[RMDB]
RNA sequence: GGGAACGACUCGAGUAGAGUCGAAAAAGUUUUGAUGGGAGAACAUCUCCACAAAAACAUCUGAAGGGUUAUGAGUCUCGAGAAAGUUAUGGACGUCGUUCAAGAGUCGGCUCAUCUUCAUAGAAAAGAAAGGUCAUUUGUCCUUCCGCAAGAGAGACGUGUUCUCGUAUUUCGAUACGAGAACACGAAAAGAAACAACAACAACAAC
Reactivity to 2A3 in 0.01 (KOAc 150mM, MgCl2 10mM, bicine 150mM(pH8.5), 24C), signal-to-noise 1, nucleotides 027 to 156: a000g020u010u030u010u070g190a240u150g010g010g010a040g010a260a170c100a200u050c010u000c000c000a030c000a000a030a000a070a000c010a050u010c000u020g040a020a040g030g000g010u000u100a000u050g030a040g000u010c040u070c070g050a040g060a000a110a000g040u150u120a030u130g040g000a000c060g100u040c020g010u140u000c030a060a050g020a000g150u030c000g000g000c010u020c070a050u000c000u080u040c000a050u130a140g110a050a100a000a000g150a000a070a000g060g040u020c010a140u040u040u230g000u010c000c000u010u010c000c000g110c110a110a010g100a000g020a030g020a090
Notes: Chemical mapping of a 207-nucleotide RNA with 2A3. It was measured as part of the RMDB library OK3TST. 2A3 adducts were read by reverse transcription with SuperScript II with manganese.